The record gives the reactivity of an RNA of 207 nucleotides to 2A3 and DMS.
[RMDB]
RNA sequence: GGGAACGACUCGAGUAGAGUCGAAAAGGGUUUGAGCCAUCGCCCGAAUAAGAUGGUUGAUACAAGUCGACAUUGUACGCGACGUAGUACGUACUCAUUAGUGCGAAAGCACGGUUAGUCCGACUUGGCAGGGACGAUCUUCUGUCAAUACUUAGAAGCAUAUCAUUAGUUUCGACUAAUGAUAUGCAAAAGAAACAACAACAACAAC
Reactivity to 2A3 in 0.01 (KOAc 150mM, MgCl2 10mM, bicine 150mM(pH8.5), 24C), signal-to-noise 7, nucleotides 027 to 156: g030g000g010u040u060u120g080a020g000c000c000a000u010c000g020c000c010c020g020a070a130u200a080a020g000a010u010g010g000u020u040g060a040u070a120c070a080a030g010u010c010g030a050c060a150u080u200g050u140a040c070g000c020g030a030c050g010u000a020g040u030a060c020g000u020a010c000u010c030a040u030u110a110g000u000g000c010g050a090a010a000g000c000a000c000g010g000u020u020a020g000u010c060c020g010a030c030u020u010g000g000c010a010g030g000g020a040c110g110a200u040c040u150u020c010u040g020u020c000a020a040u090a150c050u120u140a050g040a190a020
Reactivity to DMS in 0.01 (KOAc 150mM, MgCl2 10mM, bicine 150mM(pH8.5), 24C), signal-to-noise 5, nucleotides 027 to 156: g020g000g030u000u000u000g010a090g020c020c030a050u000c020g020c010c020c020g020a090a120u010a050a070g020a050u000g010g030u000u000g010a200u010a080c030a040a060g010u000c010g020a050c030a160u000u000g010u000a030c020g000c010g020a170c170g020u010a140g020u000a040c010g010u000a030c020u000c140a120u010u000a090g040u000g000c010g010a120a080a260g010c000a010c000g030g030u000u000a120g000u000c030c000g030a040c020u000u000g000g010c060a090g000g020g010a090c070g020a120u010c050u000u000c050u000g010u000c050a080a100u000a100c060u000u010a080g010a170a300
The data come from the RNA Mapping Database (RMDB), library OK3TST.